Conditions: 150 mM KOAc, 10 mM MgCl2 and 150 mM bicine (pH 8.5), 24 C. Structure probing data (2A3 and DMS) for a 207-nucleotide construct. It was measured as part of the RMDB library M2RFPK.
RNA sequence: GGGAACGACUCGAGUAGAGUCGAAAACGUGUCCGUCGGCGUAGCCGACAACAUGCCCAGGUAGCCCAGACCUUCAAGGCUACGGUGCGUUGCGACGCACGGUCUGAUUCUUCACAACGACGUUCAGAAGAUCGGAUCACUUUCGAGUGAUCCGAAAUACCUAAAUGAUAUUCGUAUCAUUUAGGUAAAAAGAAACAACAACAACAAC
Reactivity to 2A3 in 0.01 (KOAc 150mM, MgCl2 10mM, bicine 150mM(pH8.5), 24C), signal-to-noise 6, nucleotides 027 to 156: c030g010u020g000u060c140c130g000u000c010g010g000c260g150u220a050g030c000c000g010a000c000a000a010c000a000u090g020c000c000c000a030g040g000u000a000g000c010c050c130a020g010a000c000c000u010u030c020a010a020g000g000c000u010a000c000g000g000u010g000c000g010u030u070g050c180g090a010c010g000c000a000c010g000g010u000c010u010g010a030u060u030c020u050u040c030a040c040a210a100c140g220a060c110g070u120u100c060a050g030a070a010g020a090u040c000g000g000a000u000c000a000c000u040u100u090c130g040a010g000u010g000a000u010c000c000g000a000a000a000
Reactivity to DMS in 0.01 (KOAc 150mM, MgCl2 10mM, bicine 150mM(pH8.5), 24C), signal-to-noise 2, nucleotides 027 to 156: c060g020u010g020u010c020c120g000u000c000g000g020c000g040u010a120g040c000c000g000a050c040a040a010c010a020u000g000c000c020c020a080g020g010u010a050g000c010c010c170a120g020a130c040c040u000u010c100a090a300g000g000c020u000a020c000g030g020u000g010c020g020u010u000g040c090g000a110c020g000c020a060c010g000g000u000c020u000g000a230u000u000c040u010u000c030a110c040a050a120c030g020a120c050g010u010u000c030a120g010a060a090g010a130u000c010g010g000a010u000c000a020c000u000u000u000c250g020a070g050u000g020a010u000c000c000g000a010a040a100